Conditions: 150 mM KOAc, 10 mM MgCl2 and 150 mM bicine (pH 8.5), 24 C. The record gives the reactivity of an RNA of 207 nucleotides to 2A3. For 2A3 the reverse transcriptase was SuperScript II with manganese. For 2A3, 480 sequencing reads were counted.
RNA sequence: GGGAACGACUCGAGUAGAGUCGAAAAGUGAGAGACUAAACACAUCUUUUAGAUGGAAACAAAGAUUACGCUUUAGCUGCUUAGUUCAGCUACACCUUGGAUAACUUAUUCUAUACGGGUUUUUCAAAGGUGUUGACUAGUAUAGAUCACCAUAAAUCAAUAGUCAUCCGUUCGCGGAUGACUAUUGAAAAGAAACAACAACAACAAC
Reactivity to 2A3 in 0.01 (KOAc 150mM, MgCl2 10mM, bicine 150mM(pH8.5), 24C), signal-to-noise 1, nucleotides 027 to 156: g080u010g000a060g030a030g010a060c030u070a070a140a000c010a020c000a040u020c010u060u220u080u100a080g000a100u040g040g050a150a000a000c030a020a110a010g050a050u100u150a080c070g010c060u080u100u080a010g000c010u040g010c040u090u070a040g040u200u130c000a000g000c010u010a020c000a020c020c000u000u040g000g000a000u010a030a000c000u000u030a030u300u100c130u060a060u030a140c100g000g000g000u010u010u020u030u020c030a090a090a020g000g000u010g040u030u010g000a010c050u000a030g030u010a080u030a090g080a050u040c070a040c180c060a060u120a090a140a040u000